[RMDB]
RNA sequence: GGGAACGACUCGAGUAGAGUCGAAAACUCACAUUUUUAGAAGAGACAGAGACUUGAUCUACUUCUUAGGAAAGGGCAAGACUGAAAGAAAAUUCAGGUCCAUCUCAGUGGCUCCCCACCACAGGUGGAGAGGCUACUACUAAUCAGACUGAUGCAACUAAUAUCACCGCUUCGGCGGUGAUAUUAGAAAAGAAACAACAACAACAAC
Reactivity to 2A3 in 0.01 (KOAc 150mM, MgCl2 10mM, bicine 150mM(pH8.5), 24C), signal-to-noise 2, nucleotides 027 to 156: c010u040c000a030c020a060u150u130u090u050u110a040g030a110a020g010a000g020a030c020a020g050a010g050a110c030u020u040g020a070u080c010u040a110c000u080u040c000u010u060a110g020g040a040a000a020g050g000g010c030a060a060g020a110c020u020g030a020a020a050g240a030a070a220a000u130u040c000a000g000g000u030c000c010a060u060c050u040c100a010g000u010g000g000c010u000c060c040c000c020a000c000c010a150c090a180g000g000u000g020g000a010g000a000g040g000c010u010a010c020u020a000c000u030a040a090u050c030a020g100a080c090u140g010a050u140g210c020a040a000